This 177-nucleotide RNA was probed chemically with 2A3 and DMS. Reactivities are rounded to 0.1 and cut off at 0 and 3.
RNA sequence: GGGAACGACUCGAGUAGAGUCGAAAAUUUUUGUGUUGAUCCGUGUAGGAUUGGGAACCCGCCGAAUUGAAACAUCUUAGUAGGCGGAGGAAAAGAAAGCAAUAUGCGAUGUCGUUAGUAACGGCGACCCCUCCUCAAUAUUCGUAUUGAGGAGGGGAAAAGAAACAACAACAACAAC
Reactivity to 2A3 in 0.01 (KOAc 150mM, MgCl2 10mM, bicine 150mM(pH8.5), 24C), signal-to-noise 2, nucleotides 027 to 126: u090u070u000u040u070g030u030g030u070u040g020a010u050c030c010g000u070g150u300a130g000g060a050u050u050g030g000g010a040a040c020c000c000g000c030c040g000a040a020u020u020g030a010a290a090c090a150u100c050u010u020a030g000u000a020g010g000c000g010g000a030g010g050a000a110a000a000g140a000a040a000g020c040a090a230u030a060u300g030c010g120a070u120g000u000c000g010u020u020a040g120u080a070a000c000g010g010c000g060a060
Reactivity to DMS in 0.01 (KOAc 150mM, MgCl2 10mM, bicine 150mM(pH8.5), 24C), signal-to-noise 2, nucleotides 027 to 126: u020u010u010u010u010g010u010g020u010u000g010a030u010c000c020g030u030g050u040a060g000g000a040u000u000g000g000g000a240a220c070c000c000g030c000c030g000a120a160u000u020g000a030a080a070c240a040u010c030u010u020a050g010u000a060g020g000c000g000g000a060g020g000a040a040a080a070g000a080a110a090g010c040a140a090u020a040u020g010c000g000a130u020g000u000c000g000u010u000a110g010u010a220a040c020g000g030c050g000a130
The RNA was probed in 150 mM KOAc, 10 mM MgCl2 and 150 mM bicine (pH 8.5) at 24 C. For 2A3, 1,537 sequencing reads were counted.